[RMDB]
RNA sequence: GGGAACGACUCGAGUAGAGUCGAAAAUAAGCACCUCGUUAGGUGAGGCGGCUACACGAACAUAGGCCACUGACCCCGAACGUCGAGAGACGCCCCGGGUCAGGACAGCUCUUCGCGGCUUAAGGGUAAAAUCACAACGUCUUCGGACGUUGUGAAAGGUAGCUACUAGAUUCGUCUAGUAGCUACCAAAAGAAACAACAACAACAAC
Reactivity to 2A3 in 0.01 (KOAc 150mM, MgCl2 10mM, bicine 150mM(pH8.5), 24C), signal-to-noise 3, nucleotides 027 to 156: u190a020a010g030c020a030c000c000u000c020g140u100u260a090g000g090u130g050a000g000g020c110g040g000c010u060a040c060a010c050g160a170a000c040a140u150a100g040g000c020c000a040c010u000g000a000c000c050c000c050g060a060a030c000g000u000c000g010a020g010a000g000a100c000g030c010c020c060c000g020g000g000u000c000a000g000g010a000c030a020g010c000u010c020u160u070c080g040c060g050g010c000u090u140a050a060g030g000g040u080a070a070a010a100u030c010a000c000a000a000c000g010u000c010u030u020c120g110g000a000c000g000u000u000g000u000g000a000a000a000
Reactivity to DMS in 0.01 (KOAc 150mM, MgCl2 10mM, bicine 150mM(pH8.5), 24C), signal-to-noise 2, nucleotides 027 to 156: u000a070a130g000c000a020c010c000u010c040g010u000u010a110g080g030u000g010a010g070g020c020g020g050c020u040a110c070a050c000g020a030a050c100a110u000a090g000g000c000c040a130c010u000g020a080c040c010c000c080g010a080a050c000g010u000c010g000a300g000a300g000a040c000g000c020c000c000c220g000g000g000u020c030a000g000g010a030c050a120g010c020u000c070u000u000c050g020c030g010g010c010u010u000a080a100g010g000g010u000a070a050a070a170u000c000a010c000a000a040c000g010u010c010u010u000c260g030g010a020c000g010u010u000g020u010g010a000a030a040

Chemical mapping of a 207-nucleotide RNA with 2A3 and DMS. The 2A3 profile rests on 2,615 reads. For DMS, 3,014 sequencing reads were counted.